[RMDB]
RNA sequence: GGGAACGACUCGAGUAGAGUCGAAAAUGACCAUCGCCUAUGAAAGUGGUGUUAACCUCUUUGAUACUGCCGAAGUCUAUGCUGCUGGAAAGGCUGAAGUGAUUCUGGGGAGCAUCAUCAAGAAGAAGUGGCUAAAUUGUUUCGACAAUUUAGCCACAAAAGAAACAACAACAACAAC
Reactivity to DMS in 0.01 (KOAc 150mM, MgCl2 10mM, bicine 150mM(pH8.5), 24C), signal-to-noise 2, nucleotides 027 to 126: u000g020a180c030c020a070u010c030g010c070c090u020a050u010g000a030a090a020g020u010g010g000u000g020u000u020a070a060c030c010u000c020u000u000u000g010a040u000a030c130u000g020c010c010g000a060a110g010u000c050u000a110u030g000c020u020g000c110u000g000g000a150a080a100g010g000c000u000g010a040a060g030u000g000a140u010u000c040u000g030g010g000g000a080g020c090a010u000c020a030u000c090a090a060g000a080a080g020a040a100
Reactivity to 2A3 in 0.01 (KOAc 150mM, MgCl2 10mM, bicine 150mM(pH8.5), 24C), signal-to-noise 1, nucleotides 027 to 126: u080g000a020c000c030a020u050c030g000c060c060u180a130u160g100a040a080a050g050u010g010g000u010g040u110u090a080a080c000c000u040c020u020u080u070g030a050u050a110c000u070g070c010c010g030a030a000g010u000c010u030a120u210g050c030u040g000c000u040g090g050a120a050a050g050g000c000u030g030a070a000g020u040g060a060u100u000c000u060g000g000g000g000a000g010c000a030u000c000a010u050c040a000a060g100a050a010g000a110a010